[RMDB]
RNA sequence: GGGAACGACUCGAGUAGAGUCGAAAAGGGCCAACUUGUCUCAUGGCGCAAAUUCAACUUACGGAGAGACAUGCUUACCAGCUUGGGAAACAUACUAAGACUGUGAACUUACCGUUAGUUACAAGAAGGCAUAUGAAUACUUCGGUAUUCAUAUGCCAAAAGAAACAACAACAACAAC
Reactivity to 2A3 in 0.01 (KOAc 150mM, MgCl2 10mM, bicine 150mM(pH8.5), 24C), signal-to-noise 5, nucleotides 027 to 126: g050g020g000c010c000a010a020c030u030u080g020u010c000u000c020a050u030g020g000c010g000c070a110a060a060u210u130c050a080a000c000u030u020a000c020g000g000a050g000a000g020a080c030a020u080g030c010u080u130a090c020c000a010g020c000u020u010g000g010g050a040a240a010c060a050u210a070c010u030a060a020g100a190c020u030g050u060g150a120a020c010u050u080a020c000c000g000u010u080a010g030u080u040a100c080a090a040g080a080a040
Reactivity to DMS in 0.01 (KOAc 150mM, MgCl2 10mM, bicine 150mM(pH8.5), 24C), signal-to-noise 3, nucleotides 027 to 126: g000g050g000c010c000a050a070c120u010u000g010u000c000u000c020a240u020g000g010c000g020c080a040a080a060u060u040c160a030a010c070u010u020a030c030g010g010a290g000a060g040a060c040a030u000g060c180u000u070a060c150c000a040g000c000u020u000g020g000g010a080a100a220c240a150u060a100c030u000a000a050g010a130c040u000g020u030g000a030a060c100u010u020a120c030c000g000u000u000a000g010u010u000a110c300a110a080g030a250a040

Structure probing data (2A3 and DMS) for a 177-nucleotide construct. For DMS, 3,269 sequencing reads were counted. The reactions ran in a buffer of 150 mM KOAc, 10 mM MgCl2 and 150 mM bicine (pH 8.5), at 24 C.